Source information:
Structure probing data (DMS and 2A3) for a 177-nucleotide construct. Reactivities are given for positions 27 through 126. Values are in units of 0.01, from 0 to 300, in steps of 10. The DMS profile rests on 6,367 reads.
RNA sequence: GGGAACGACUCGAGUAGAGUCGAAAACGGCCUGCCCGUGCGCGGCGAGCGCCGCGUCGAACGCGCGCUGCAGCGCGGCCGCGUCGAGGUCCUCGCCGAUCAGCACGAAGCGGCUCGCGGGCGCCUAUAUAAUUUACGGUUUCGACCGUAAAUUAUAAAAAGAAACAACAACAACAAC
Reactivity to DMS in 0.01 (KOAc 150mM, MgCl2 10mM, bicine 150mM(pH8.5), 24C), signal-to-noise 5, nucleotides 027 to 126: c060g000g010c030c020u010g040c040c100c010g040u000g020c010g020c000g010g010c010g000a020g020c300g030c030c020g000c050g030u000c020g000a120a200c020g010c010g020c060g020c060u000g020c170a170g020c070g010c020g010g010c050c060g010c020g010u000c010g010a050g010g000u010c300c000u000c030g010c040c020g000a050u010c070a220g010c020a020c010g010a140a160g000c010g000g000c000u000c040g040c060g020g000g010c180g020c030c030u000a080
Reactivity to 2A3 in 0.01 (KOAc 150mM, MgCl2 10mM, bicine 150mM(pH8.5), 24C), signal-to-noise 2, nucleotides 027 to 126: c020g020g000c010c040u120g020c030c000c000g020u010g010c060g010c000g000g040c020g010a010g000c080g000c000c010g040c020g080u020c020g030a110a030c010g000c000g000c030g050c080u300g110c090a160g090c000g020c000g080g000c030c070g060c000g000u000c000g000a010g010g040u020c000c040u010c010g000c000c020g020a140u100c070a040g000c010a000c050g000a030a000g000c040g040g010c050u080c090g010c080g020g090g090c100g080c010c010u170a180